[RMDB]
RNA sequence: GGGAACGACUCGAGUAGAGUCGAAAAGAAGUCCGACACGCUGUCGCGGGGCGAUUUAGCACCUUUCCCGGGAAAGGGCCCGGGGAGAUUUAGGCACAUUUAUUAGAUCAGUGCCGAUCUAAAGAAAGCGAUAUGGUAUAUUCGUAUACCAUAUCGCAAAAGAAACAACAACAACAAC
Reactivity to DMS in 0.01 (KOAc 150mM, MgCl2 10mM, bicine 150mM(pH8.5), 24C), signal-to-noise 3, nucleotides 027 to 126: g010a140a110g030u000c020c010g010a130c080a130c050g010c050u010g010u010c070g000c210g020g000g000g000c040g010a040u000u000u020a070g030c070a180c040c000u000u000u010c000c000c010g000g000g000a090a080a110g020g000g010c010c010c010g000g000g000g000a010g000a040u000u000u000a080g020g000c020a000c010a070u000u000u010a120u030u010a080g000a070u010c120a120g010u000g000c010c010g020a030u000c010u000a030a080a160g010a050a130a140
Reactivity to 2A3 in 0.01 (KOAc 150mM, MgCl2 10mM, bicine 150mM(pH8.5), 24C), signal-to-noise 3, nucleotides 027 to 126: g080a060a000g050u040c010c000g030a060c040a030c070g090c060u060g000u230c030g020c020g070g030g010g000c000g000a000u070u110u150a050g010c010a090c020c000u030u130u100c000c010c020g010g000g030a200a210a070g130g000g000c000c000c020g020g000g060g010a010g000a000u080u150u220a060g010g020c010a010c000a010u080u150u210a260u110u230a080g080a110u110c070a010g030u000g010c000c010g000a010u010c000u030a040a070a080g090a060a110a000